[RMDB]
RNA sequence: GGGAACGACUCGAGUAGAGUCGAAAAGUCUCCUGUUUCGACAGGAGACAAAAAGAUAUGGAAUCUCUUACUGCCGCAGAUAGGCAUUCGGAAACGAAUGCCUGUAGGCACUAAGAGGAUUCCUAAGUCAAAAAAUGGAUAUGUUCGCAUAUCCAAAUCGGUAUUGAUGUUUCGACAUCAAUACCGAAAAAGAAACAACAACAACAAC
Reactivity to 2A3 in 0.01 (KOAc 150mM, MgCl2 10mM, bicine 150mM(pH8.5), 24C), signal-to-noise 2, nucleotides 027 to 156: g000u000c010u000c000c000u020g010u020u120u110c200g160a010c000a010g010g000a000g000a000c000a000a000a000a000a000g020a030u050a030u040g010g010a010a000u000c010u010c000u010u000a010c020u010g000c020c000g070c140a040g050a300u100a030g020g050c000a000u000u010c000g010g010a000a040a090c000g000a000a000u000g030c000c000u000g000u010a030g000g000c000a010c010u000a000a000g010a010g160g050a000u000u000c000c010u010a060a010g070u020c050a060a000a080a010a030a160u070g000g000a000u020a000u010g040u040u110c220g020c120a000u030a020u010c040c000a020a010a030
Reactivity to DMS in 0.01 (KOAc 150mM, MgCl2 10mM, bicine 150mM(pH8.5), 24C), signal-to-noise 1, nucleotides 027 to 156: g030u000c000u000c000c000u000g020u000u000u000c280g080a080c030a000g010g000a030g010a010c010a010a010a030a110a160g000a100u000a290u010g000g000a080a030u000c000u000c010u020u000a020c050u000g000c000c000g010c170a090g000a030u000a030g030g040c030a050u000u000c000g000g000a160a150a240c000g000a060a000u000g000c000c000u010g000u000a060g050g050c000a000c070u010a000a050g000a030g010g000a020u000u000c000c000u000a010a190g000u010c010a000a050a110a150a100a210u000g020g000a010u000a020u030g000u000u000c300g100c030a000u030a010u000c000c000a000a030a070
Description: Chemical mapping of a 207-nucleotide RNA with 2A3 and DMS. The RNA was probed in 150 mM KOAc, 10 mM MgCl2 and 150 mM bicine (pH 8.5) at 24 C. The DMS profile rests on 2,136 reads. Values cover nucleotides 27 to 156. Source: RMDB library RNAMAK, as collected in RNAgym. The 2A3 profile rests on 1,403 reads.